[RMDB]
The record gives the reactivity of an RNA of 207 nucleotides to 2A3 and DMS.
For DMS, 2,511 sequencing reads were counted.
The 2A3 profile rests on 1,968 reads.
Conditions: 150 mM KOAc, 10 mM MgCl2 and 150 mM bicine (pH 8.5), 24 C.
Reactivities are given for positions 27 through 156.
RNA sequence: GGGAACGACUCGAGUAGAGUCGAAAAAGACGUGUACGCACGUCACACCGUGGCGGCGGUGUAAAACAAACAUUAAGCCGCCAGCGUCCCUGAACAAGGCAUUUUCCGAUUCUCCGGGGGUUGCAAAAAAACUGAACUUGGUUCGCCAAGUUCAGAACUUCACCUACUAGUUCGCUAGUAGGUGAAGAAAAGAAACAACAACAACAAC
Reactivity to 2A3 in 0.01 (KOAc 150mM, MgCl2 10mM, bicine 150mM(pH8.5), 24C), signal-to-noise 2, nucleotides 027 to 156: a000g010a000c020g000u020g010u060a040c220g000c100a000c000g010u010c010a010c000a020c030c010g090u030g000g000c000g000g000c020g000g000u010g000u050a120a200a020a020c080a030a070a010c020a000u090u160a090a030g000c000c000g000c000c000a000g010c030g020u040c010c020c000u000g050a070a030c070a090a020g080g000c050a050u090u040u040u050c030c070g040a070u100u060c060u070c130c000g000g000g000g050g000u080u200g020c040a040a080a000a000a000a010a120c000u010g000a000a000c000u000u000g010g000u030u050c090g020c100c000a000a000g000u000u000c000a000g000a010a000
Reactivity to DMS in 0.01 (KOAc 150mM, MgCl2 10mM, bicine 150mM(pH8.5), 24C), signal-to-noise 1, nucleotides 027 to 156: a040g000a000c010g030u000g010u020a120c190g120c040a020c020g000u000c010a110c020a070c020c040g010u000g050g060c020g020g090c000g000g010u000g000u000a020a140a160a250c220a180a150a070c110a040u010u000a020a090g080c020c010g070c000c000a010g000c000g010u000c020c000c000u000g020a080a120c060a080a080g020g000c050a150u000u000u000u040c020c000g000a150u000u000c010u000c020c030g020g020g000g010g000u000u000g000c030a030a010a040a070a030a130a100c010u010g030a010a010c000u010u000g000g000u000u000c300g030c030c000a010a030g000u000u000c010a010g020a070a050